[RMDB]
RNA sequence: GGGAACGACUCGAGUAGAGUCGAAAAGGGUAUCCCCGAAACGGGCUGCGACCGGCGAAGCGAUUCGUUCUCUGCCGCACAACAUUUCCGAGGGGAGACCACCGCAAGGUGGCGUUACAAGGCCCGUCCCCCAGGUAGAUUUCGAUCUACCUGGGGGAAAAGAAACAACAACAACAAC
Reactivity to 2A3 in 0.01 (KOAc 150mM, MgCl2 10mM, bicine 150mM(pH8.5), 24C), signal-to-noise 3, nucleotides 027 to 126: g120g000g040u100a110u100c000c000c000c000g010a040a080a000c010g000g000g000c020u030g030c070g060a060c020c010g000g000c000g000a010a010g030c050g140a170u040u030c030g050u070u000c040u000c020u090g300c000c010g020c030a070c050a180a050c010a160u080u060u150c050c070g030a030g020g010g000g000a000g010a010c020c000a000c000c000g030c060a020a090g020g000u010g010g000c010g000u020u060a070c060a020a060g070g000c000c000c000g010u020
Reactivity to DMS in 0.01 (KOAc 150mM, MgCl2 10mM, bicine 150mM(pH8.5), 24C), signal-to-noise 1, nucleotides 027 to 126: g000g000g010u000a010u000c010c000c020c010g000a050a140a070c040g010g010g000c000u000g000c290g060a090c210c020g000g010c040g060a000a070g020c220g000a300u000u000c000g020u000u000c000u000c000u040g000c080c000g000c170a120c190a090a010c230a100u030u010u000c000c090g000a070g040g000g040g000a040g060a000c000c000a000c000c080g000c200a070a140g040g030u000g000g000c120g020u000u070a110c020a120a220g030g000c000c000c000g000u000

About this RNA:
Structure probing data (2A3 and DMS) for a 177-nucleotide construct. For DMS the reverse transcriptase was MarathonRT. 2A3 is a SHAPE reagent: it acylates the 2'-hydroxyl of flexible nucleotides of all four kinds. The data come from the RNA Mapping Database (RMDB), library RFM100. 2A3 adducts were read by reverse transcription with SuperScript II with manganese. Reactivities are rounded to 0.1 and cut off at 0 and 3.